[RMDB]
RNA sequence: GGGAACGACUCGAGUAGAGUCGAAAACACUGGGGUUUAGCCCGCUGCUGACACCUGCCAUCCUGCCAUAACAGCCAGGCUCUGUAAUGGGGUACUCCAUCAGCCCUCUGUCAGGGUGAUAAAAUGGACCUCGAUCUACUUUCGAGUAGAUCGAGGUAAAAGAAACAACAACAACAAC
Reactivity to DMS in 0.01 (KOAc 150mM, MgCl2 10mM, bicine 150mM(pH8.5), 24C), signal-to-noise 1, nucleotides 027 to 126: c050a150c110u010g000g000g030g040u000u000u010a060g050c060c020c090g040c180u000g000c030u000g000a100c070a090c070c060u000g000c080c030a030u000c020c010u000g020c030c030a050u000a080a100c120a030g010c140c070a150g000g000c090u000c000u000g000u020a100a130u000g030g010g000g000u000a030c090u000c000c030a040u000c110a110g000c060c010c000u000c090u010g010u000c080a040g050g000g020u010g000a090u020a030a020a180a050u010g000g010